RNA sequence: GGGAACGACUCGAGUAGAGUCGAAAAUAAGCAACUAUUAUUGCCAAUUAACACAUCUGAACUCUCACCUUGUAAAAUGGUUCUCUGCUGGAGAUGAAUGCAUUAUAAGUUAUCAUAAUGAUGGUUAAUGCCGGCAGAUAUUCGUAUCUGCCGGCAUAAAAGAAACAACAACAACAAC
Reactivity to 2A3 in 0.01 (KOAc 150mM, MgCl2 10mM, bicine 150mM(pH8.5), 24C), signal-to-noise 1, nucleotides 027 to 126: u050a000a000g150c040a000a080c030u230a180u300u000a250u050u050g070c000c000a080a030u180u120a030a030c030a030c000a160u000c000u000g050a000a020c030u000c100u100c000a130c100c010u050u110g030u150a000a210a000a000u100g050g000u200u000c000u000c000u000g000c000u000g020g000a000g000a000u000g090a020a020u120g140c050a020u020u030a060u150a190a010g050u020u020a050u070c100a100u030a130a000u050g110a000u060g000g110u050u000a000
Structure probing data (2A3) for a 177-nucleotide construct. Source: RMDB library OK1LIB, as collected in RNAgym. For 2A3 the reverse transcriptase was SuperScript II with manganese. The RNA was probed in 150 mM KOAc, 10 mM MgCl2 and 150 mM bicine (pH 8.5) at 24 C.